Source information
An RNA of 207 nucleotides, treated with 2A3 and read out base by base.
RNA sequence: GGGAACGACUCGAGUAGAGUCGAAAAACAAUAUUCAUAUUUUUACUCAAAAGAAGACUUCAGUACGGAUUUCCAUACAAUACACUAUAUCUCCAGUUUAUGAUCUUCAUUGGUAUUUUAUUCCUGUUUGUAUCUGCUAUAGUCUGGUUAAGUCAUGCCGUCUAGGACAAUUCGUUGUCCUAGACGGAAAAGAAACAACAACAACAAC
Reactivity to 2A3 in 0.01 (KOAc 150mM, MgCl2 10mM, bicine 150mM(pH8.5), 24C), signal-to-noise 1, nucleotides 027 to 156: a000c140a010a300u220a100u250u140c030a000u070a100u200u130u030u040u130a270c030u100c090a000a130a000a160g050a220a000g010a160c010u090u040c300a050g080u050a010c050g020g110a030u090u070u000c040c030a000u040a050c010a070a050u130a090c000a010c120u060a000u000a070u150c010u000c000c030a000g020u010u070u000a160u160g070a010u010c000u110u000c090a040u010u050g000g000u030a060u020u180u030u070a050u030u110c000c030u070g000u030u070u040g000u050a090u050c010u050g010c010u050a070u010a070g110u000c070u000g030g070u080u080a090a030g030u050c040a010u050g000
For 2A3, 401 sequencing reads were counted. It was measured as part of the RMDB library OK3TST.